[RMDB]
RNA sequence: GGGAACGACUCGAGUAGAGUCGAAAAAUACUUCUCAGGAUGGCGCGUUGCAGUCCAACAAGAUCCAGGGAGUGUACAGAAUUUUCCUAUACCUCGAGUCGGGUUUGGAAUCUAAGGUUGACUCGCUAAAACUUUACGUGGUUCGCCACGUAAAGAACGUUGAAUGGCUGUUCGCAGCCAUUCAACGAAAAGAAACAACAACAACAAC
Reactivity to 2A3 in 0.01 (KOAc 150mM, MgCl2 10mM, bicine 150mM(pH8.5), 24C), signal-to-noise 1, nucleotides 027 to 156: a000u060a000c000u070u080c030u000c050a020g040g020a040u090g050g170c060g010c040g110u030u060g040c190a110g060u120c090c000a000a000c040a080a080g050a030u020c010c020a030g000g000g000a040g040u080g000u050a070c080a080g200a240a120u010u050u030u010c000c000u020a020u090a050c040c050u010c030g010a030g000u030c030g010g010g000u050u070u070g060g010a020a020u000c070u040a220a050g170g010u130u110g010a010c000u000c040g000c010u060a050a090a080a080c030u000u000u000a000c000g000u000g000g040u000u060c050g020c110c010a010c000g010u000a000a000a000g000a020a010
Structure probing data (2A3) for a 207-nucleotide construct. 2A3 is a SHAPE reagent: it acylates the 2'-hydroxyl of flexible nucleotides of all four kinds.